[RMDB]
RNA sequence: GGGAACGACUCGAGUAGAGUCGAAAAUACUCACAUUUCGAUGUGAGUAACUGUCUAGUCGCUAGCGCCGAUCAAGCGGUAGCGACUAGACUUUAUUGAUCGCCAGCUAACCUUUCGAGGUUAGCAAAGAGCAUGAGGAGUUCGCUCCUCAUGCUCUAAAAGAAACAACAACAACAAC
Reactivity to DMS in 0.01 (KOAc 150mM, MgCl2 10mM, bicine 150mM(pH8.5), 24C), signal-to-noise 1, nucleotides 027 to 126: u000a010c000u010c000a000c010a000u000u000u020c210g010a040u000g020u000g000a000g030u010a020a050c070u000g000u000c000u000a000g030u000c000g010c000u000a080g000c010g010c020c060g000a150u010c300a160a050g010c010g010g010u000a010g010c000g010a000c000u000a000g000a030c000u000u000u000a100u000u000g000a060u010c130g010c050c060a100g030c000u000a000a000c000c000u000u000u010c150g010a020g030g010u000u000a000g020c000a000a000
Description: The record gives the reactivity of an RNA of 177 nucleotides to DMS. The reactions ran in a buffer of 150 mM KOAc, 10 mM MgCl2 and 150 mM bicine (pH 8.5), at 24 C.